[RMDB]
RNA sequence: GGGAACGACUCGAGUAGAGUCGAAAACAGUAUUUAUCCAUUACAGUGUCGUAGCUGACACUCUUCUCGUCGAGCGAGGUCAGGAUAUCAGGCGCACCUGUCUGUGCGUUGACGCGCACCAGGUAGAGAGCAUGACUAUGUUCGCAUAGUCAUGCUCAAAAGAAACAACAACAACAAC
Reactivity to 2A3 in 0.01 (KOAc 150mM, MgCl2 10mM, bicine 150mM(pH8.5), 24C), signal-to-noise 3, nucleotides 027 to 126: c040a030g090u080a160u060u150u060a090u040c020c040a060u100u090a120c060a100g020u010g010u020c020g050u080a030g060c090u080g040a010c040a100c030u030c010u070u050c000u000c000g190u050c110g060a070g050c040g000a010g000g060u060c040a010g010g050a020u010a030u150c060a090g120g000c040g000c050a010c040c040u010g040u060c060u050g030u010g000c010g010u040u130g090a050c070g000c000g000c000a010c000c010a010g010g010u040a040g080a000
Reactivity to DMS in 0.01 (KOAc 150mM, MgCl2 10mM, bicine 150mM(pH8.5), 24C), signal-to-noise 3, nucleotides 027 to 126: c050a100g020u010a110u010u010u010a050u000c030c030a130u010u000a140c200a030g020u000g010u000c010g020u000a170g010c140u010g010a030c030a050c010u000c100u000u000c020u000c000g020u000c160g000a170g010c300g000a050g010g010u010c110a090g010g010a040u000a030u000c120a110g010g000c040g000c070a060c000c000u000g000u010c150u000g020u010g000c020g000u000u010g000a110c180g010c000g020c010a010c060c050a000g020g000u010a090g000a210
The record gives the reactivity of an RNA of 177 nucleotides to 2A3 and DMS.
For DMS the reverse transcriptase was MarathonRT.
It was measured as part of the RMDB library OK2TRN.
The 2A3 profile rests on 3,197 reads.
The RNA was probed in 150 mM KOAc, 10 mM MgCl2 and 150 mM bicine (pH 8.5) at 24 C.
2A3 adducts were read by reverse transcription with SuperScript II with manganese.